[RMDB]
RNA sequence: GGGAACGACUCGAGUAGAGUCGAAAAGCAACUUAGGAUUUUAGGCUCCCCGUGCGUGUCUCGAACCAUGCCGGGCCAAACCCACGGGGGCUGGCGGACCCCGUGCGGUCAAAAUCAAACCGCUGGAAAAACAGUUCUAGCUUCGGCUAGAACUGAAGUGUAUCAUUACCUUCGGGUAAUGAUACACAAAAGAAACAACAACAACAAC
Reactivity to 2A3 in 0.01 (KOAc 150mM, MgCl2 10mM, bicine 150mM(pH8.5), 24C), signal-to-noise 2, nucleotides 027 to 156: g000c000a000a110c120u130u240a150g050g060a180u150u120u070u130a100g030g030c060u150c010c000c000c040g080u230g020c020g010u030g050u030c110u060c290g090a100a070c030c010a000u030g000c000c010g020g030g000c030c000a010a060a000c010c000c000a000c010g000g000g030g010g010c030u030g000g020c000g010g000a000c010c000c000c010g000u010g000c090g000g000u050c010a030a090a000a030u130c020a080a090a100c000c000g000c020u020g070g000a050a060a000a050a000c000a010g010u000u010c000u000a000g000c000u000u030c140g120g000c000u000a000g000a000a000c000u000g000a030a000
Source: RMDB library M2RFPK, as collected in RNAgym. An RNA of 207 nucleotides, treated with 2A3 and read out base by base. The reactions ran in a buffer of 150 mM KOAc, 10 mM MgCl2 and 150 mM bicine (pH 8.5), at 24 C. The 2A3 profile rests on 962 reads. 2A3 adducts were read by reverse transcription with SuperScript II with manganese.